An RNA of 207 nucleotides, treated with 2A3 and read out base by base.
RNA sequence: GGGAACGACUCGAGUAGAGUCGAAAAAUGCCUGGCUAAUUUUUGUAUUUUUACUAGAGACACGGUUUCACCAUGUUGGCUAGGAUGGUCUUGAUCUCCUGACCUUGGCCUCCCAAAGUGCUGGGAUCACAGGAGUUAGCCACUGCGCCCAGCCACACACUCAUUUAGGGUUCGCCCUAAAUGAGUGAAAAGAAACAACAACAACAAC
Reactivity to 2A3 in 0.01 (KOAc 150mM, MgCl2 10mM, bicine 150mM(pH8.5), 24C), signal-to-noise 2, nucleotides 027 to 156: a000u030g000c000c000u000g020g000c000u050a100a100u100u100u120u130u140g070u110a150u070u160u110u210u170a110c050u030a030g000a010g020a030c020a030c090g050g060u090u200u220c070a060c030c020a070u060g030u050u050g100g000c040u020a020g030g040a120u110g010g020u000c020u060u090g070a140u080c040u030c050c100u090g070a080c030c000u010u070g020g020c000c000u050c000c000c010a070a130a010g120u110g040c020u020g010g000g000a020u090c030a020c010a060g030g010a040g030u030u030a000g030c000c030a030c060u040g010c030g020c040c000c030a030g030c010c000a010c020a010
Conditions: 150 mM KOAc, 10 mM MgCl2 and 150 mM bicine (pH 8.5), 24 C. Values cover nucleotides 27 to 156.